Conditions: 150 mM KOAc, 10 mM MgCl2 and 150 mM bicine (pH 8.5), 24 C. Structure probing data (DMS and 2A3) for a 177-nucleotide construct. DMS (dimethyl sulfate) methylates the pairing face of unpaired adenines and cytosines. For DMS the reverse transcriptase was MarathonRT. For 2A3 the reverse transcriptase was SuperScript II with manganese.

[RMDB]
RNA sequence: GGGAACGACUCGAGUAGAGUCGAAAAGAUAUGGAGAUCGGACCAGCGACGAUCUCGGAAACGAGGGAGCUGUGUCCAUCUCCUAAGUCAAAACAACCGAUAGUGCGUUCGCGCACUAUCGGUUGAACCUUAAACGCAAGUUCGCUUGCGUUUAAGGAAAAGAAACAACAACAACAAC
Reactivity to DMS in 0.01 (KOAc 150mM, MgCl2 10mM, bicine 150mM(pH8.5), 24C), signal-to-noise 4, nucleotides 027 to 126: g010a050u000a300u010g000g010a010g010a000u000c200g050g000a020c000c010a020g000c000g020a060c240g000a010u000c000u000c010g000g010a100a100a190c010g000a050g010g010g000a020g010c010u000g000u010g010u000c010c000a010u000c000u000c000c000u010a000a060g010u010c060a080a070a100a260c010a000a000c000c010g000a010u000a000g010u000g020c000g010u000u020c230g030c010g020c000a010c000u000a010u010c000g000g000u000u000g000a030a100
Reactivity to 2A3 in 0.01 (KOAc 150mM, MgCl2 10mM, bicine 150mM(pH8.5), 24C), signal-to-noise 4, nucleotides 027 to 126: g030a010u090a070u160g000g000a020g010a010u090c280g020g010a010c010c010a000g000c010g230a300c010g010a090u000c000u000c000g000g020a090a120a020c010g000a010g010g020g000a020g000c010u030g060u150g000u300c000c000a000u000c010u020c000c000u010a020a010g000u010c020a020a000a130a240c010a010a000c010c000g000a000u000a000g000u000g020c030g040u050u070c300g000c000g000c210a000c000u000a000u000c010g000g000u000u000g010a000a000